[RMDB]
RNA sequence: GGGAACGACUCGAGUAGAGUCGAAAAACUGCGGUAUUCGUACCGCAGUACAUAAAAAGGAUAAAAUACCAGUAGCCCGAAACGCAAGCGAGCACUACUGGCGCAAGAACCACUUCGGUGGUUCUAACAUAUCAGUAGUCUUCGGACUACUGAUAUGAAAAGAAACAACAACAACAAC
Reactivity to DMS in 0.01 (KOAc 150mM, MgCl2 10mM, bicine 150mM(pH8.5), 24C), signal-to-noise 6, nucleotides 027 to 126: a020c000u000g010c000g010g010u000a010u000u010c200g020u000a010c000c000g030c000a000g020u000a020c130a070u010a040a070a060a100a070g010g010a180u010a040a080a070a110u000a100c000c000a010g010u000a010g020c090c110c010g000a030a090a080c140g000c210a080a110g000c040g000a130g020c190a170c020u000a010c020u000g010g000c120g010c160a080a030g000a010a010c000c000a010c000u000u010c180g020g030u000g000g000u000u000c000u000a040a160
Reactivity to 2A3 in 0.01 (KOAc 150mM, MgCl2 10mM, bicine 150mM(pH8.5), 24C), signal-to-noise 6, nucleotides 027 to 126: a000c000u010g000c010g010g000u010a030u030u080c160g030u030a010c000c000g000c000a000g000u010a000c000a010u300a030a130a020a010a030g150g000a080u210a190a210a080a020u150a110c010c000a000g000u010a000g040c010c030c040g050a100a150a010c080g010c100a050a090g120c040g130a030g020c020a010c040u030a000c000u020g000g020c020g010c030a040a030g000a000a010c000c000a000c000u040u050c140g080g000u010g000g010u000u000c000u000a000a000